RNA sequence: GGGAACGACUCGAGUAGAGUCGAAAAGAUAUGGAGAUGGACCCGACGAUGAGACGUUGAAAUCGGAAACGAUGGAGUCUCUAAGUCGCCAUCUCCUAAGUCAAAGAGACGCGUUCGCGCGUCUCAAGUACUGGUUGUUGUUCGCAACAACCAGUACAAAAGAAACAACAACAACAAC
Reactivity to 2A3 in 0.01 (KOAc 150mM, MgCl2 10mM, bicine 150mM(pH8.5), 24C), signal-to-noise 2, nucleotides 027 to 126: g030a010u050a060u140g030g000a000g000a000u000g040g020a080c100c170c120g000a000c000g050a080u220g010a010g010a010c040g160u300u060g050a120a060a010u010c000g000g010a070a060a040c030g000a000u010g020g010a070g010u030c000u010c010u040a090a010g010u010c000g000c000c000a000u000c000u000c000c010u000a030a010g020u040c050a080a100a080g020a000g020a000c020g050c010g000u070u120c300g070c010g000c000g220u000c000u000c000a010a010
Reactivity to DMS in 0.01 (KOAc 150mM, MgCl2 10mM, bicine 150mM(pH8.5), 24C), signal-to-noise 2, nucleotides 027 to 126: g000a050u010a230u000g010g010a050g010a000u000g000g020a200c230c200c060g040a030c000g000a220u000g000a070g000a000c010g000u000u000g000a100a060a020u000c010g000g000a100a080a090c010g010a010u000g000g000a150g000u000c000u000c010u030a090a230g000u000c000g030c000c000a000u000c000u000c000c000u000a010a090g010u000c060a080a130a070g000a010g010a000c010g000c000g030u010u010c230g030c000g000c010g030u000c000u000c010a000a100